This 177-nucleotide RNA was probed chemically with 2A3. The 2A3 profile rests on 651 reads. The RNA was probed in 150 mM KOAc, 10 mM MgCl2 and 150 mM bicine (pH 8.5) at 24 C. It was measured as part of the RMDB library OK1LIB. 2A3 adducts were read by reverse transcription with SuperScript II with manganese. High 2A3 reactivity points to a flexible backbone, as in loops and unpaired stretches.
RNA sequence: GGGAACGACUCGAGUAGAGUCGAAAAUAGCAGCCCCAGCAUAGGCAAUAUCGCGCUCCAUGGCCCGAGUACGUGACACCCUUGACAGGCUCCGUGAUCCGUCGGUCCUUACCUCAAUUAACGAGGAUGCUGGUGGCUGAUUCGUCAGCCACCAGCAAAAAGAAACAACAACAACAAC
Reactivity to 2A3 in 0.01 (KOAc 150mM, MgCl2 10mM, bicine 150mM(pH8.5), 24C), signal-to-noise 1, nucleotides 027 to 126: u170a020g080c040a000g020c000c000c000c000a000g000c050a040u120a070g060g000c030a100a000u040a000u130c010g000c000g000c010u000c020c000a110u070g110g000c020c010c000g000a040g000u030a080c040g010u000g040a010c000a030c020c010c000u060u100g030a080c090a010g090g000c010u000c000c000g040u100g070a100u100c030c000g050u000c020g040g000u030c000c000u040u000a010c000c000u000c020a080a250u270u120a080a000c070g040a060g000g040a050